The record gives the reactivity of an RNA of 177 nucleotides to DMS and 2A3.
2A3 adducts were read by reverse transcription with SuperScript II with manganese.
The data come from the RNA Mapping Database (RMDB), library RFMREP.
The RNA was probed in 150 mM KOAc, 10 mM MgCl2 and 150 mM bicine (pH 8.5) at 24 C.
For DMS, 1,688 sequencing reads were counted.
For DMS the reverse transcriptase was MarathonRT.

[RMDB]
RNA sequence: GGGAACGACUCGAGUAGAGUCGAAAAGUUUUACGCAUAAUUAAUCACCUCACUACAUUUUACUGUUCCUAAAGAAUUUGUGACAGGUACAGUAAAACGUAUUGCAAGGUUUAUCAGUUCCUAUAAAGAUAGGUGAAGAGUUCGCUCUUCACCUAUCAAAAGAAACAACAACAACAAC
Reactivity to DMS in 0.01 (KOAc 150mM, MgCl2 10mM, bicine 150mM(pH8.5), 24C), signal-to-noise 2, nucleotides 027 to 126: g010u000u000u000u000a120c170g000c130a080u000a050a080u000u000a080a110u000c180a060c000c010u000c050a040c070u000a010c010a050u000u000u000u010a000c010u000g010u000u010c020c000u010a120a070a140g000a120a120u010u010u020g020u000g010a140c220a030g000g030u000a000c000a030g010u000a010a000a000a010c040g020u000a000u000u000g000c160a150a030g000g010u000u000u000a050u000c100a140g010u000u000c010c000u000a030u010a090a100a130
Reactivity to 2A3 in 0.01 (KOAc 150mM, MgCl2 10mM, bicine 150mM(pH8.5), 24C), signal-to-noise 3, nucleotides 027 to 126: g010u030u070u100u250a110c060g040c020a030u090a170a060u210u110a060a050u100c030a020c010c000u000c000a000c030u010a010c000a030u000u000u000u000a010c000u000g050u040u010c000c000u010a070a080a050g100a150a210u180u290u300g120u060g070a080c110a050g000g000u010a000c000a000g000u000a000a000a000a000c000g000u000a010u000u000g040c070a070a040g050g000u010u020u090a110u060c040a010g010u020u000c020c000u050a050u130a150a070a000